[RMDB]
RNA sequence: GGGAACGACUCGAGUAGAGUCGAAAACCGCCCCCAUAAUUGAAAGCAUGGUUGUAAUUCCGGCAAUCUGGAGGCGUUCUGGACAGGGGUUCGAUUCCCCUCACCUCCACCCAAGGGCAUUCCGCUGGCUAUAUGAUGGUUUCGACCAUCAUAUAGCAAAAGAAACAACAACAACAAC
Reactivity to 2A3 in 0.01 (KOAc 150mM, MgCl2 10mM, bicine 150mM(pH8.5), 24C), signal-to-noise 9, nucleotides 027 to 126: c010c000g020c000c000c000c000c000a090u170a160a140u200u190g080a090a020a000g060c070a060u140g060g030u060u040g070u140a090a120u170u020c010c010g010g010c030a010a060u040c040u060g030g000a020g010g030c040g050u090u060c070u090g050g030a050c040a070g000g000g000g010u020u070c030g020a020u070u080c000c000c000c000u010c010a020c000c010u020c000c010a030c010c000c010a040a040g010g010g000c020a040u080u020c010c020g020c040u070g050
Reactivity to DMS in 0.01 (KOAc 150mM, MgCl2 10mM, bicine 150mM(pH8.5), 24C), signal-to-noise 5, nucleotides 027 to 126: c020c010g010c020c010c010c010c010a110u030a100a090u020u030g010a110a080a120g000c050a050u000g010g020u000u020g010u010a070a150u030u020c050c020g000g010c020a040a100u010c080u000g020g000a060g010g000c040g010u010u020c060u010g010g000a080c190a040g000g000g000g000u000u000c260g000a300u020u030c020c000c000c010u000c110a040c070c010u010c020c030a100c060c010c040a090a100g020g000g000c040a070u010u000c020c020g020c080u000g010